[RMDB]
RNA sequence: GGGAACGACUCGAGUAGAGUCGAAAACGAAGUCUUUAAAAAGCUGGGAGCGCACGGCGUCUUCCGUAGUGGCGAUGCCAUUCAGGUGAUCAUUGGUCUGCAUGUAUCCCAGCUGCGUGAACAGCUCCAAUCCUUGGGCAUUCGUGCCCAAGGAUUGAAAAGAAACAACAACAACAAC
Reactivity to DMS in 0.01 (KOAc 150mM, MgCl2 10mM, bicine 150mM(pH8.5), 24C), signal-to-noise 3, nucleotides 027 to 126: c080g000a120a140g030u010c050u010u020u000a060a130a130a070a050g010c000u000g000g000g000a180g010c050g010c060a060c120g010g020c050g000u000c020u000u030c020c010g010u000a050g040u030g000g000c300g010a050u000g000c010c010a170u000u010c160a070g000g010u010g000a040u010c070a150u010u010g000g010u000c070u000g000c050a050u010g010u000a090u000c000c010c020a010g020c070u000g010c070g010u010g020a200a110c180a060g000c020u000c050
Reactivity to 2A3 in 0.01 (KOAc 150mM, MgCl2 10mM, bicine 150mM(pH8.5), 24C), signal-to-noise 2, nucleotides 027 to 126: c040g030a050a010g080u050c040u050u300u150a150a160a090a050a010g000c010u040g040g010g000a020g010c020g000c020a020c070g030g010c010g070u010c030u210u120c010c040g020u040a050g030u120g050g020c030g090a080u110g000c020c010a030u110u080c050a050g000g000u050g090a020u030c050a180u100u150g020g080u130c120u130g050c030a050u120g050u110a120u020c010c000c030a010g010c000u000g000c010g000u060g010a050a030c020a000g020c020u080c020